[RMDB]
RNA sequence: GGGAACGACUCGAGUAGAGUCGAAAAGCCGACAGCGAGGGUACAAUACCCUCGCAAGGGCUCGGUCAACCCGCCCCCGCAAGGUUUCGGGUUCGAUGAGCGGGGUGUGCUCACGCCGAGCCUACAGAUUUUUAUUAAAAUUCGUUUUAAUAAAAAUAAAAGAAACAACAACAACAAC
Reactivity to DMS in 0.01 (KOAc 150mM, MgCl2 10mM, bicine 150mM(pH8.5), 24C), signal-to-noise 3, nucleotides 027 to 126: g030c000c010g020a120c260a130g000c000g010a020g020g000g020u000a120c240a110a110u040a040c000c000c000u000c000g000c010a020a040g000g010g030c000u000c000g010g010u020c070a120a120c230c300c020g000c070c080c030c000c000g020c030a140a120g010g020u010u020u000c030g000g020g020u000u110c030g010a040u020g000a220g020c000g010g000g000g000u030g010u010g000c030u010c110a090c300g000c000c000g000a000g010c000c000u000a020c090a120g000
Reactivity to 2A3 in 0.01 (KOAc 150mM, MgCl2 10mM, bicine 150mM(pH8.5), 24C), signal-to-noise 3, nucleotides 027 to 126: g090c010c010g050a060c030a010g010c000g000a000g010g020g030u110a070c120a040a140u120a240c000c000c000u000c010g000c000a000a000g000g000g000c000u000c010g000g020u070c030a060a080c020c030c000g010c010c010c000c020c030g030c050a060a070g130g010u070u110u110c030g020g060g000u170u240c070g030a060u090g030a030g020c010g000g030g010g020u070g020u020g000c020u030c050a030c030g020c000c010g000a000g000c000c000u010a020c010a020g190
This 177-nucleotide RNA was probed chemically with DMS and 2A3. The reactions ran in a buffer of 150 mM KOAc, 10 mM MgCl2 and 150 mM bicine (pH 8.5), at 24 C. Reactivities are given for positions 27 through 126. For 2A3, 1,601 sequencing reads were counted.